[RMDB]
RNA sequence: GGGAACGACUCGAGUAGAGUCGAAAAGUGUGCUCGGGCCAGAACAUACCGUGUGUGGAGGCCAAAUGUCGAUUCGGGCGCAAAGUCGUCUCAUUUCCGUAUCGGUUACCGCCGCGGACAGAGCAAGCCAGUCGUAGUAAUUCGUUACUACGACUGGAAAAGAAACAACAACAACAAC
Reactivity to DMS in 0.01 (KOAc 150mM, MgCl2 10mM, bicine 150mM(pH8.5), 24C), signal-to-noise 6, nucleotides 027 to 126: g020u010g020u000g010c000u000c020g010g010g010c010c030a120g000a100a070c060a040u010a090c060c190g010u010g010u000g020u000g010g010a300g000g010c030c030a050a080a060u010g010u000c070g000a100u000u000c070g010g000g010c030g010c060a050a060a100g010u000c040g020u000c010u000c040a150u010u000u000c020c000g010u000a100u000c040g010g000u000u010a140c160c070g010c040c010g020c040g000g020a070c290a060g010a060g030c100a110a110g010
Reactivity to 2A3 in 0.01 (KOAc 150mM, MgCl2 10mM, bicine 150mM(pH8.5), 24C), signal-to-noise 4, nucleotides 027 to 126: g060u050g000u020g050c020u010c030g020g030g010c020c030a040g030a100a020c020a050u100a090c040c100g060u040g010u030g010u040g140g060a070g030g010c010c000a010a120a040u150g010u040c040g010a040u100u040c020g000g050g010c020g000c050a050a080a060g140u160c020g050u000c030u020c060a080u040u090u000c030c020g030u080a140u120c030g030g010u050u050a110c020c000g030c000c000g000c010g000g030a040c040a040g050a010g020c030a040a010g030
An RNA of 177 nucleotides, treated with DMS and 2A3 and read out base by base. The data come from the RNA Mapping Database (RMDB), library OK2TST. Conditions: 150 mM KOAc, 10 mM MgCl2 and 150 mM bicine (pH 8.5), 24 C. Reactivities are given for positions 27 through 126. For DMS the reverse transcriptase was MarathonRT.